RNA sequence: GGGAACGACUCGAGUAGAGUCGAAAAACGUUGAUAUGGAUUUACUCCGAGGAGACGAACUACCACGAACAGGGGAAACUCUACCCGUGGCAUCUCCGUUUGACGAGUAAGUCCUAAGUCAACAUGCUGCGCAACAUCUUCGGAUGUUGCAAAAGAAACAACAACAACAAC
Reactivity to 2A3 in 0.01 (KOAc 150mM, MgCl2 10mM, bicine 150mM(pH8.5), 24C), signal-to-noise 7, nucleotides 027 to 129: a010c080g010u000u000g000a000u000a000u030g000g000a000u000u000u000a010c010u000c000c000g030a070g000g000a000g040a010c020g010a040a040c050u190a070c090c000a000c000g020a050a020c030a090g010g000g000g000a000a000a000c000u000c000u020a040c000c020c000g000u000g000g010c000a030u010c010u000c000c000g030u160u160u120g020a010c010g000a000g000u000a000a000g000u000c000c000u000a000a000g000u000c000a000a000c000a010u120g050c040u100g020c030
Reactivity to DMS in 0.01 (KOAc 150mM, MgCl2 10mM, bicine 150mM(pH8.5), 24C), signal-to-noise 6, nucleotides 027 to 129: a020c160g020u030u000g020a030u000a070u040g050g000a020u000u000u000a080c020u000c010c040g030a000g000g030a030g080a040c070g010a080a060c020u140a250c040c000a010c010g030a030a090c120a130g060g020g030g020a040a040a060c010u000c020u020a110c300c150c000g020u000g010g030c040a000u010c000u020c040c030g010u100u090u050g030a120c300g030a000g020u020a020a000g030u000c000c030u030a000a000g010u040c010a000a000c020a090u040g040c060u040g040c260